Description: The data come from the RNA Mapping Database (RMDB), library TTRDEL. An RNA of 177 nucleotides, treated with 2A3 and DMS and read out base by base. For 2A3, 5,742 sequencing reads were counted. The RNA was probed in 150 mM KOAc, 10 mM MgCl2 and 150 mM bicine (pH 8.5) at 24 C. For 2A3 the reverse transcriptase was SuperScript II with manganese. DMS adducts were read by reverse transcription with MarathonRT.
RNA sequence: GGGAACGACUCGAGUAGAGUCGAAAAGAUAUGGACGGAGAGCGAUAAGUUACGGUCGGAAACGACCGAUAACUUUUGACGCUUUAAGUCCUAAGUCAAAACAGGAAAAACUUCGGUUUUUCCUGAAGAAUAUUAGGAGGUUCGCCUCCUAAUAUUCAAAAGAAACAACAACAACAAC
Reactivity to 2A3 in 0.01 (KOAc 150mM, MgCl2 10mM, bicine 150mM(pH8.5), 24C), signal-to-noise 3, nucleotides 027 to 126: g000a010u030a010u080g000g000a000c020g020g050a040g000a010g090c020g040a120u050a300a010g000u010u000a000c000g000g000u000c010g000g010a050a050a020c000g010a000c000c000g000a020u000a000a000c010u030u020u050u150g070a020c010g000c000u040u040u030a020a010g000u000c000c000u010a030a010g000u000c020a000a050a140a210c020a010g000g000a000a000a000a040a010c030u130u300c300g140g000u020u010u000u010u000c000c000u000g000a010a020
Reactivity to DMS in 0.01 (KOAc 150mM, MgCl2 10mM, bicine 150mM(pH8.5), 24C), signal-to-noise 3, nucleotides 027 to 126: g000a040u010a180u010g000g000a020c000g010g050a170g010a000g020c000g010a130u010a030a010g010u000u000a000c000g000g010u000c000g020g000a040a020a100c000g010a000c010c000g010a050u000a000a000c000u000u000u000u000g010a180c050g010c000u000u000u000a110a210g010u000c000c000u000a000a100g000u000c020a100a080a110a260c020a010g000g010a010a010a010a000a000c000u010u020c200g020g000u000u000u010u000u000c010c000u000g000a010a060